RNA sequence: GGGAACGACUCGAGUAGAGUCGAAAAACCAGUAUGUACAGGGGUGAGUUGACCUGUCAUCUAGACUGCUGACCAUCAACUCACCGGUCAGCUGGAUGAUGUCCACAGAGUACGACAUCAGUACUCAGUGUAUGGACGAGUUCGCUUGUCUAUACACAAAAGAAACAACAACAACAAC
Reactivity to DMS in 0.01 (KOAc 150mM, MgCl2 10mM, bicine 150mM(pH8.5), 24C), signal-to-noise 9, nucleotides 027 to 126: a080c010c000a030g010u010a050u010g010u060a020c010a060g010g020g010g020u000g000a020g010u000u000g000a020c140c160u020g000u000c000a020u010c040u020a120g010a140c200u010g000c080u000g010a020c020c300a300u000c020a010a010c020u000c020a010c020c010g000g010u000c010a030g000c000u000g000g000a070u020g000a070u020g000u000c010c030a090c170a120g000a020g000u000a010c020g010a140c220a130u040c140a080g000u000a010c000u000c010a120
Reactivity to 2A3 in 0.01 (KOAc 150mM, MgCl2 10mM, bicine 150mM(pH8.5), 24C), signal-to-noise 9, nucleotides 027 to 126: a000c020c000a020g020u080a210u290g090u060a010c030a040g300g030g000g020u010g010a010g000u000u010g020a030c030c100u050g020u000c000a010u010c010u050a110g170a280c130u080g020c020u010g020a010c010c020a030u020c010a010a010c010u000c010a010c000c000g000g000u000c000a000g000c000u010g010g020a040u080g030a030u070g070u030c010c010a060c050a070g020a000g010u030a010c050g090a040c130a190u130c040a070g000u010a000c000u000c010a000
Chemical mapping of a 177-nucleotide RNA with DMS and 2A3. It was measured as part of the RMDB library OK1LIB. 2A3 adducts were read by reverse transcription with SuperScript II with manganese. The 2A3 profile rests on 207,622 reads. Conditions: 150 mM KOAc, 10 mM MgCl2 and 150 mM bicine (pH 8.5), 24 C. Reactivities are given for positions 27 through 126.